[RMDB]
An RNA of 177 nucleotides, treated with DMS and read out base by base.
For DMS the reverse transcriptase was MarathonRT.
Values are in units of 0.01, from 0 to 300, in steps of 10.

RNA sequence: GGGAACGACUCGAGUAGAGUCGAAAAGUUCGGGCAGACACAGGACGAGGGAGAUGAUCUGUACUCCUGAGGUGUCUGUUUGUCUGUCUGUUUCGAUGGAGGGAAUGAGUCUCGAAGAGACUAGACGAGACGUGUCCCAAUUCGUUGGGACACGUCUAAAAGAAACAACAACAACAAC
Reactivity to DMS in 0.01 (KOAc 150mM, MgCl2 10mM, bicine 150mM(pH8.5), 24C), signal-to-noise 1, nucleotides 027 to 126: g000u000u000c010g000g000g020c000a010g010a010c010a060c080a070g000g070a030c000g030a300g020g000g010a000g000a100u010g010a140u010c160u000g000u010a150c020u010c000c010u000g030a300g000g050u010g010u020c000u000g010u000u010u000g000u000c000u030g000u000c030u000g000u000u000u000c010g010a090u020g040g000a120g030g010g000a070a110u000g000a020g000u010c000u000c010g020a120a130g010a070g010a040c010u000a110g020a100c180g020

Overview:
The RNA was probed in 150 mM KOAc, 10 mM MgCl2 and 150 mM bicine (pH 8.5) at 24 C. The data come from the RNA Mapping Database (RMDB), library OK2TRN. Reactivities are given for positions 27 through 126.